[RMDB]
RNA sequence: GGGAACGACUCGAGUAGAGUCGAAAAAGGCUAAUAGUAGGGCCUGGGCUUUCUGUGUUAAAUGCCAUAAUGAUAUAUUGGCAGCAACAGACCCCAGUGAGGCUUUCGAGAAAUUCGUAAGUCUCUUAUGCUCUUAGGUUCGCCUAAGAGAAAAGAAACAACAACAACAAC
Reactivity to 2A3 in 0.01 (KOAc 150mM, MgCl2 10mM, bicine 150mM(pH8.5), 24C), signal-to-noise 9, nucleotides 027 to 129: a010g030g000c020u030a030a040u050a180g210u040a060g020g030g030c000c010u010g000g010g000c030u100u240u010c010u020g040u000g060u070u170a130a190a070u060g000c000c020a020u090a100a100u250g190a030u070a020u040a050u250u060g010g000c010a010g010c020a020a060c000a010g010a030c010c000c000c000a020g040u030g050a000g000g000c000u010u020u030c020g010a010g050a100a300a140u170u010c000g010u000a010a000g000u000c000u000c020u010u010a140u100g010